[RMDB]
RNA sequence: GGGAACGACUCGAGUAGAGUCGAAAAGUCGAGCGAAUGGAUUAAGAGCUUGCUCUUAUGAAGUUAGCGGCGGACGGGUGAGUAACACGUGGGUAACCUGCCCAUAAGACUGGGAUAACUCCGGGAAGAUGCACUAGUAUUUCGAUACUAGUGCAUCAAAAGAAACAACAACAACAAC
Reactivity to DMS in 0.01 (KOAc 150mM, MgCl2 10mM, bicine 150mM(pH8.5), 24C), signal-to-noise 8, nucleotides 027 to 126: g020u010c010g010a300g010c010g010a030a020u000g000g000a120u000u000a000a020g000a040g010c030u030u010g010c000u000c000u000u000a010u000g010a300a160g010u000u000a070g010c010g020g010c080g010g010a060c040g000g000g000u000g010a100g000u010a060a070c100a070c110g030u010g000g000g010u000a090a090c100c100u020g000c010c000c020a030u000a070a070g000a060c070u000g000g000g000a190u030a080a110c130u010c040c060g000g010g010a070a100
Reactivity to 2A3 in 0.01 (KOAc 150mM, MgCl2 10mM, bicine 150mM(pH8.5), 24C), signal-to-noise 8, nucleotides 027 to 126: g040u030c020g010a020g010c020g030a010a010u030g000g010a000u010u020a020a000g010a010g010c060u110u160g050c000u030c000u000u010a020u020g010a010a010g000u010u030a010g030c010g160g140c020g020g020a020c010g020g000g000u070g050a120g040u120a110a020c040a020c160g020u050g010g000g000u030a070a130c010c070u100g010c000c010c000a000u030a050a030g050a030c050u040g020g000g030a050u080a160a070c030u030c040c010g020g020g020a060a070